This 207-nucleotide RNA was probed chemically with 2A3 and DMS.
RNA sequence: GGGAACGACUCGAGUAGAGUCGAAAAAGACGGAAACCCAUCGACUGUCACCAGAUGCUGCAUCACCUGAUCACUGAUGGCUCAACGGUAUCCGGCGGUACAAAUGAAUACUUGUAGCUGCCUUUUGAAAAGGAGUUCAUCUUCGGAUGAACUCCAACUCUCGUUUAAUCUUCGGAUUAAACGAGAGAAAAGAAACAACAACAACAAC
Reactivity to 2A3 in 0.01 (KOAc 150mM, MgCl2 10mM, bicine 150mM(pH8.5), 24C), signal-to-noise 5, nucleotides 027 to 156: a000g050a020c060g050g040a040a070a050c010c020c020a060u080c070g070a070c040u060g020u090c020a030c040c020a040g040a100u100g030c030u030g030c020a020u030c020a040c010c030u060g030a050u060c020a020c040u020g020a030u040g060g000c030u030c070a060a060c060g040g000u050a080u090c020c050g000g010c000g020g000u010a010c010a010a040a020u220g080a120a050u160a170c080u050u030g010u030a030g100c010u010g010c000c000u100u130u060u140g110a080a090a030a040g000g000a010g000u000u000c000a000u000c000u040u060c140g080g000a000u000g000a000a000c000u000c000c000a000a000
Reactivity to DMS in 0.01 (KOAc 150mM, MgCl2 10mM, bicine 150mM(pH8.5), 24C), signal-to-noise 2, nucleotides 027 to 156: a140g020a140c030g010g000a100a100a100c060c000c020a080u000c020g010a120c030u010g000u000c040a100c060c060a120g020a000u000g020c020u000g030c020a150u000c100a040c010c000u000g010a230u000c120a140c090u000g000a110u020g040g010c030u000c040a100a080c000g000g030u000a050u000c030c040g000g020c040g020g020u010a090c020a050a050a140u010g000a080a080u000a080c090u020u000g030u000a120g030c020u010g000c010c100u000u000u010u020g010a130a040a120a150g010g000a040g010u000u020c000a020u000c000u000u000c280g050g000a010u000g000a000a020c000u000c000c000a000a000
The 2A3 profile rests on 4,438 reads. For DMS the reverse transcriptase was MarathonRT.